[RMDB]
Chemical mapping of a 177-nucleotide RNA with DMS and 2A3.
RNA sequence: GGGAACGACUCGAGUAGAGUCGAAAAGUCGACGCGGUGGCGGCCAGUUGCUCGGUGCCGGGGGCGUGGCCUCCGGUGACAAUUGCCGGCCGCCGCUACAUGGAUGGCGGGGUGGCCAGCUCGGUCACCUCAAUGACGGUUUCGACCGUCAUUGAGGAAAAGAAACAACAACAACAAC
Reactivity to DMS in 0.01 (KOAc 150mM, MgCl2 10mM, bicine 150mM(pH8.5), 24C), signal-to-noise 2, nucleotides 027 to 126: g020u000c040g020a090c160g020c030g010g030u010g000g010c010g000g000c110c050a040g020u000u000g020c150u000c080g000g010u010g020c010c000g010g010g010g010g010c000g010u020g020g020c000c000u000c000c000g000g000u010g010a020c030a020a060u010u010g000c030c030g020g010c000c010g010c000c000g010c010u000a050c170a100u000g010g010a070u010g000g020c090g000g000g000g030u000g000g010c000c010a130g000c130u020c110g010g010u000c020a030
Reactivity to 2A3 in 0.01 (KOAc 150mM, MgCl2 10mM, bicine 150mM(pH8.5), 24C), signal-to-noise 2, nucleotides 027 to 126: g040u030c030g030a030c030g000c040g040g000u030g000g000c020g000g030c080c030a030g020u060u040g050c130u020c070g240g050u150g000c010c000g030g000g030g000g020c300g170u160g240g050c030c010u030c010c000g050g030u030g000a000c000a030a050u030u030g030c010c030g020g070c000c000g010c070c000g020c000u000a000c000a050u150g110g000a070u020g020g080c050g020g020g000g010u040g010g000c020c010a050g050c090u110c160g010g070u060c020a040
The reactions ran in a buffer of 150 mM KOAc, 10 mM MgCl2 and 150 mM bicine (pH 8.5), at 24 C.